RNA sequence: GGGAACGACUCGAGUAGAGUCGAAAAACAGGCCAACGGCGCCCCAGCCGUUGACCGGUCGGCUCAAGAGCACGACAAGGGCGACCGGCCGCCCAGUUCCGAGGCACCGGCCACCCAGGGGGAACAGCUGUGUAAAGCUAUUCGUAGCUUUACACAGAAAAGAAACAACAACAACAAC
Reactivity to DMS in 0.01 (KOAc 150mM, MgCl2 10mM, bicine 150mM(pH8.5), 24C), signal-to-noise 4, nucleotides 027 to 126: a090c110a090g020g010c000c000a010a000c020g000g000c000g000c060c030c030c030a260g010c000c010g000u000u010g000a010c000c020g020g030u000c010g010g000c030u000c110a110a160g000a070g020c010a080c040g010a080c040a130a100g000g020g020c020g000a040c010c000g010g010c060c060g010c020c010c030a130g010u020u010c090c080g020a120g010g010c030a190c020c010g020g010c010c000a070c010c000c010a190g010g010g020g000g000a180a080c200a090g000
Reactivity to 2A3 in 0.01 (KOAc 150mM, MgCl2 10mM, bicine 150mM(pH8.5), 24C), signal-to-noise 3, nucleotides 027 to 126: a000c020a020g010g000c000c000a000a000c000g000g020c010g070c010c000c000c000a010g010c010c000g000u000u000g000a000c010c000g020g010u010c000g020g020c010u010c080a160a100g040a020g170c080a090c300g080a030c080a110a180g000g010g000c000g010a030c020c020g000g040c050c090g000c000c010c010a060g090u270u040c070c050g060a170g020g000c030a030c040c000g010g000c000c000a020c000c000c010a030g000g000g010g010g010a030a040c040a040g060